Chemical mapping of a 177-nucleotide RNA with 2A3 and DMS. For 2A3 the reverse transcriptase was SuperScript II with manganese. For DMS the reverse transcriptase was MarathonRT. Values cover nucleotides 27 to 126. The 2A3 profile rests on 2,539 reads. The data come from the RNA Mapping Database (RMDB), library OK1LIB.

RNA sequence: GGGAACGACUCGAGUAGAGUCGAAAACGAUUGGGAAAUGCCGCAAAUUGGUCAUGGGGUUUAGGAUGCCGCCCAGAUAGAGCGCGGCCAGCGCCGACAUCAGGGCCAACGUGGUGGCGAUCGGUGCCUACGCGUACAGGUUCGCCUGUACGCGUAGAAAAGAAACAACAACAACAAC
Reactivity to 2A3 in 0.01 (KOAc 150mM, MgCl2 10mM, bicine 150mM(pH8.5), 24C), signal-to-noise 3, nucleotides 027 to 126: c040g100a100u100u110g030g060g030a040a120a070u150g030c010c000g010c010a070a080a120u050u050g030g000u020c010a050u020g000g080g000g020u040u050u170a100g060g070a060u120g020c000c010g000c020c000c000a040g030a110u190a040g160a010g030c060g010c000g020g000c010c000a060g030c060g020c030c000g020a020c030a040u070c010a020g070g000g000c000c000a040a030c060g060u150g000g030u010g030g010c040g030a060u020c020g010g020u040g000c000
Reactivity to DMS in 0.01 (KOAc 150mM, MgCl2 10mM, bicine 150mM(pH8.5), 24C), signal-to-noise 3, nucleotides 027 to 126: c020g020a110u010u020g000g010g000a060a130a040u020g000c000c010g000c050a070a220a130u000u000g010g030u000c060a030u000g020g000g000g000u010u010u030a100g000g040a170u010g000c030c010g030c000c020c000a160g000a110u020a130g000a090g000c230g000c000g000g020c060c220a030g000c110g010c030c040g000a100c080a040u020c040a050g000g000g050c000c010a030a110c170g010u010g000g030u000g010g000c030g040a070u000c020g000g010u000g020c050